[RMDB]
RNA sequence: GGGAACGACUCGAGUAGAGUCGAAAAGCGUACUACGUUAGACAUGCUUGAGAGGGUACAACAGCAGCUCCCAAAUAGGAGCUGACAUGUACCCUGUAGAGCAACAGCUAACGUAUCGCAAAACGAUGCGUAGAGUCUUCGGACUCUACGCAUCGAACACACGAUAUCUCUUCGGAGAUAUCGUGUGAAAAGAAACAACAACAACAAC
Reactivity to DMS in 0.01 (KOAc 150mM, MgCl2 10mM, bicine 150mM(pH8.5), 24C), signal-to-noise 1, nucleotides 027 to 156: g040c060g010u000a070c130u000a000c000g040u010u000a030g000a080c020a300u020g000c020u010u010g000a300g010a040g000g010g020u000a010c030a000a200c120a080g020c000a050g030c000u010c000c000c060a030a150a230u010a020g020g010a010g020c000u000g000a000c050a300u000g030u010a000c000c000c030u000g060u010a200g010a010g040c000a080a030c090a100g000c000u010a000a010c030g000u000a020u000c000g080c000a030a080a080a130c010g020a020u000g000c010g010u000a000g010a030g070u000c020u000u050c300g050g000a020c000u000c000u010a000c050g020c000a000u000c010g000a030a100
Reactivity to 2A3 in 0.01 (KOAc 150mM, MgCl2 10mM, bicine 150mM(pH8.5), 24C), signal-to-noise 3, nucleotides 027 to 156: g020c010g020u060a100c050u000a000c040g000u000u000a000g030a110c050a110u040g000c010u050u050g040a120g010a020g140g020g000u010a000c010a140a040c060a120g050c000a000g000c000u000c030c010c010a190a280a130u300a140g000g000a000g000c000u010g160a080c030a060u030g000u000a000c000c000c000u000g000u000a000g000a000g000c010a000a000c050a010g020c020u020a000a010c000g000u000a010u170c020g000c030a030a040a010a090c010g000a000u000g010c010g000u000a000g000a000g000u000c020u030u050c110g100g000a000c000u010c010u030a000c000g000c000a000u000c000g000a010a000